[RMDB]
RNA sequence: GGGAACGACUCGAGUAGAGUCGAAAAUUUUCUGGGAAGCAUCCCAGUCAUGUGAACUUUAAGAACACUGUCCAGUGCAGUCGUGUUUUUAUUACUCUAGGCAUCAGCAGCUUUAAUGGAAAAGCCAGUUAGUAAAGGAAUGUUCCGGUUCCUAGAAUCUACAUAUCAAAUUCGUUUGAUAUGUAGAAAAAGAAACAACAACAACAAC
Reactivity to DMS in 0.01 (KOAc 150mM, MgCl2 10mM, bicine 150mM(pH8.5), 24C), signal-to-noise 2, nucleotides 027 to 156: u020u010u000u000c060u000g000g010g020a130a220g000c130a100u010c020c020c000a130g020u000c120a050u000g030u000g020a050a090c040u000u000u000a040a080g040a030a080c010a020c020u010g010u000c020c130a210g010u010g020c090a130g040u010c190g060u000g000u020u000u000u000u000a010u030u000a080c060u010c020u000a100g030g030c030a080u000c030a070g050c070a110g000c000u000u000u000a070a100u000g040g000a050a070a050a060g030c010c050a070g040u000u000a110g010u000a070a070a100g010g010a030a050u010g020u010u010c030c030g020g020u000u000c020c010u010a100g010a100a230
Reactivity to 2A3 in 0.01 (KOAc 150mM, MgCl2 10mM, bicine 150mM(pH8.5), 24C), signal-to-noise 3, nucleotides 027 to 156: u040u060u060u030c010u040g000g000g010a090a030g140c040a140u080c000c010c010a010g030u040c050a060u190g080u050g090a080a060c030u110u160u130a090a050g020a050a000c010a010c020u050g030u040c040c070a120g040u080g300c090a030g050u100c080g040u050g030u060u070u000u030u020a060u040u100a090c030u010c040u080a040g020g000c020a050u040c030a050g070c000a010g010c030u150u090u130a120a080u180g040g060a130a060a000a000g030c000c000a030g020u080u090a020g010u060a060a070a000g010g020a090a100u070g000u070u000c050c000g030g010u000u010c000c000u000a030g040a040a010

The data come from the RNA Mapping Database (RMDB), library OK3TST. This 207-nucleotide RNA was probed chemically with DMS and 2A3. The RNA was probed in 150 mM KOAc, 10 mM MgCl2 and 150 mM bicine (pH 8.5) at 24 C.